[RMDB]
RNA sequence: GGGAACGACUCGAGUAGAGUCGAAAACGGUCAGCGCUACUGGUUCCGCUACCGCGCCCGCAACCGGCGCGGCUGGUCCGGCUGGGCGGGCACGCCUAACACGUUCGUGGGGCUGCCGGCCCCGACGGGGACCUCAAUAAUUCGUUAUUGAGGUCCCAAAAGAAACAACAACAACAAC
Reactivity to 2A3 in 0.01 (KOAc 150mM, MgCl2 10mM, bicine 150mM(pH8.5), 24C), signal-to-noise 4, nucleotides 027 to 126: c000g000g060u080c050a020g030c050g010c100u140a080c040u140g140g030u120u060c030c010g000c030u050a040c000c030g030c020g020c020c030c010g080c040a120a130c060c020g030g000c210g000c010g160g010c010u060g040g010u050c010c000g020g000c010u020g010g000g010c030g020g000g000c010a010c040g020c000c010u120a220a030c030a010c100g200u300u300c050g030u120g000g000g030g000c000u020g050c010c030g100g000c030c020c020c020g040a010c020g010
Reactivity to DMS in 0.01 (KOAc 150mM, MgCl2 10mM, bicine 150mM(pH8.5), 24C), signal-to-noise 4, nucleotides 027 to 126: c050g000g000u010c070a050g030c060g010c060u000a060c080u010g010g010u000u000c080c040g010c040u010a090c070c030g020c030g020c010c010c060g020c100a110a120c080c110g000g010c060g020c010g020g000c050u000g000g010u010c030c010g000g010c040u010g000g000g020c000g000g010g010c050a020c100g010c030c020u000a110a130c080a120c090g010u000u000c140g010u000g020g000g010g000c010u000g010c060c050g000g000c000c000c010c020g000a030c150g010
Structure probing data (2A3 and DMS) for a 177-nucleotide construct. It was measured as part of the RMDB library OK2TRN. Conditions: 150 mM KOAc, 10 mM MgCl2 and 150 mM bicine (pH 8.5), 24 C.